RNA sequence: GGGAACGACUCGAGUAGAGUCGAAAACCAUGAGACCGUAACUUUCGUAGUCAUUGAUAAAGGUGCAGGUCUCGCUCUUUUGUCAUUGCGGUUGCCUAGAGGCAUGGUCGUUUACCGCGACUUUCCAAUACGAAGAGGGCCUUCGGGCCCUCUUCAAGAUGGUCUUGUAGUUCGCUACAAGACCAUCAAAAGAAACAACAACAACAAC
Reactivity to DMS in 0.01 (KOAc 150mM, MgCl2 10mM, bicine 150mM(pH8.5), 24C), signal-to-noise 1, nucleotides 027 to 156: c010c030a130u000g040a060g010a000c000c000g040u020a210a080c070u000u030u030c070g030u000a130g000u000c200a160u010u010g020a050u000a000a050a010g020g020u010g010c070a280g060g050u000c030u000c020g000c030u000c020u010u010u010u010g000u000c080a090u000u020g040c040g000g070u000u000g000c050c050u020a140g030a120g010g000c070a040u000g020g000u000c000g000u000u000u010a140c250c150g020c020g020a100c050u000u030u000c020c050a040a240u000a110c120g000a060a030g020a030g040g020g020c020c010u010u000c300g120g000g010c010c000c000u010c000u010u000c000a020a130
Reactivity to 2A3 in 0.01 (KOAc 150mM, MgCl2 10mM, bicine 150mM(pH8.5), 24C), signal-to-noise 1, nucleotides 027 to 156: c020c000a090u100g000a000g000a010c050c030g070u070a060a090c020u040u080u060c100g080u030a080g090u140c080a110u100u180g110a080u240a120a020a050g030g020u020g030c050a000g020g010u030c000u000c000g000c000u020c040u000u090u060u070g030u030c040a190u000u280g000c010g130g030u040u030g040c000c000u090a090g040a180g140g000c010a020u060g010g010u010c010g040u040u060u130a080c070c030g020c020g030a010c040u040u050u120c010c020a060a040u000a100c040g020a020a000g020a000g010g000g000c000c000u020u050c040g060g000g000c000c000c000u000c080u000u000c000a000a010